Conditions: 150 mM KOAc, 10 mM MgCl2 and 150 mM bicine (pH 8.5), 24 C. Chemical mapping of a 207-nucleotide RNA with 2A3 and DMS. It was measured as part of the RMDB library PDB130.
RNA sequence: GGGAACGACUCGAGUAGAGUCGAAAAUGAGGCAUAAUCAUAACCAGCUCUAUCUGCUUACGUCAAACCGACCUAAAAUCCUUAAUCGCCUAUUCAUCAGUAAGUCAUAUAGCACUUGUAAUCGUAGCAAUCAUAAUUCAAACCCCCUGAAGCUUCAUCAAAUUAUUCCGUUCGCGGAAUAAUUUGAAAAAGAAACAACAACAACAAC
Reactivity to 2A3 in 0.01 (KOAc 150mM, MgCl2 10mM, bicine 150mM(pH8.5), 24C), signal-to-noise 2, nucleotides 027 to 156: u040g020a000g000g010c010a020u060a050a050u120c040a040u020a080a110c020c010a020g010c000u020c030u040a110u070c020u040g050c020u100u090a030c060g020u020c050a070a060a030c060c010g050a060c000c010u090a050a070a020a060u090c020c020u090u070a070a050u040c020g010c050c010u000a040u110u050c020a050u020c000a020g030u060a040a020g000u030c050a000u140a040u070a150g040c040a020c040u050u050g060u130a030a010u060c070g040u010a050g020c040a040a020u090c040a060u070a200a100u080u070c050a080a110a170c010c010c000c000c030u020g030a050a020g020c000u010u020c010a000
Reactivity to DMS in 0.01 (KOAc 150mM, MgCl2 10mM, bicine 150mM(pH8.5), 24C), signal-to-noise 1, nucleotides 027 to 156: u020g020a030g000g000c000a090u000a040a160u000c030a100u010a070a120c090c040a090g000c050u000c020u020a050u000c020u020g050c060u020u020a100c040g010u000c040a050a030a060c040c020g010a200c010c010u000a030a040a090a080u000c020c030u010u000a060a040u020c020g000c020c020u030a140u030u010c030a080u000c080a040g010u010a030a100g010u020c210a120u010a100u000a080g000c030a100c000u020u000g000u000a100a090u000c020g100u000a120g030c040a060a090u010c080a080u000a010a110u010u000c020a040a050a090c010c020c020c060c060u000g020a080a230g020c020u000u000c010a140
DMS adducts were read by reverse transcription with MarathonRT. 2A3 is a SHAPE reagent: it acylates the 2'-hydroxyl of flexible nucleotides of all four kinds.